RNA sequence: GGGAACGACUCGAGUAGAGUCGAAAAGCACAUACCAGUGGUCACAACGGUUCUUGUUAAGUUCAGAGGUGACUGAAUAAAUAGGUCCUCUCCUUUGAGCUGCGGGACAGACAGCCCUGUUGGCUGUCUUCACGCCGGUGUUCGCACCGGCGUGAAGAAAAGAAACAACAACAACAAC
Reactivity to 2A3 in 0.01 (KOAc 150mM, MgCl2 10mM, bicine 150mM(pH8.5), 24C), signal-to-noise 7, nucleotides 027 to 126: g070c010a010c010a070u090a060c010c020a020g020u030g020g040u110c070a040c020a150a070c080g110g010u060u000c020u060u150g100u140u210a110a010g000u010u000c010a010g000a010g000g040u050g020a020c000u040g040a050a060u150a130a080a030u120a030g030g010u030c020c030u100c040u050c000c010u030u030u040g010a010g000c010u020g000c020g000g000g010a000c010a010g040a020c020a000g010c010c010c020u090g040u070u070g030g020c020u000g020u010
Reactivity to DMS in 0.01 (KOAc 150mM, MgCl2 10mM, bicine 150mM(pH8.5), 24C), signal-to-noise 4, nucleotides 027 to 126: g000c060a060c050a050u000a120c020c020a110g010u000g010g000u040c130a060c140a080a080c150g000g000u010u000c050u000u030g000u000u010a070a020g000u010u010c000a040g010a030g030g000u000g000a030c010u000g000a090a160u020a090a140a060u010a300g000g010u000c000c300u000c090u000c000c050u000u030u000g010a010g030c020u000g010c080g010g000g010a050c090a060g000a020c010a010g000c010c000c140u000g010u010u020g000g000c000u000g010u000